Source: RMDB library OK2TRN, as collected in RNAgym. Chemical mapping of a 177-nucleotide RNA with 2A3 and DMS. Reactivities are given for positions 27 through 126. The reactions ran in a buffer of 150 mM KOAc, 10 mM MgCl2 and 150 mM bicine (pH 8.5), at 24 C. For DMS the reverse transcriptase was MarathonRT.

RNA sequence: GGGAACGACUCGAGUAGAGUCGAAAAUUUUAUCGCGCACAGUAUCUAGAGAAGAAUACCUCACGCUUCUUGAACAUGCUGAGAAUGAAACGUGGUCGCAAGUGCAGGAUAUCAUUGUUACACUGCAACUGUAAAACAAGUUCGCUUGUUUUACAGUAAAAGAAACAACAACAACAAC
Reactivity to 2A3 in 0.01 (KOAc 150mM, MgCl2 10mM, bicine 150mM(pH8.5), 24C), signal-to-noise 8, nucleotides 027 to 126: u040u050u030u060a110u090c030g000c000g010c030a020c010a060g010u010a020u000c010u030a020g010a000g010a050a010g020a050a060u120a240c010c050u100c040a050c060g030c000u000u000c000u000u030g010a020a010c010a010u030g000c020u020g020a020g060a140a120u170g080a080a080a040c050g020u040g020g040u080c030g020c100a090a030g050u010g030c010a010g030g050a050u050a010u160c080a080u030u200g040u080u040a040c090a010c040u020g000c010a030
Reactivity to DMS in 0.01 (KOAc 150mM, MgCl2 10mM, bicine 150mM(pH8.5), 24C), signal-to-noise 9, nucleotides 027 to 126: u010u010u010u010a050u000c050g020c050g020c040a200c020a030g020u000a010u000c010u000a300g010a030g010a030a020g010a060a060u010a140c080c050u000c090a060c260g000c010u000u000c010u000u000g000a090a180c300a030u000g000c020u000g000a080g000a090a070u010g000a030a060a070c080g010u000g010g020u000c100g010c070a030a060g020u000g010c020a010g000g000a110u000a080u010c120a100u000u000g010u000u000a130c240a080c020u000g010c040a070

The 2A3 profile rests on 16,114 reads.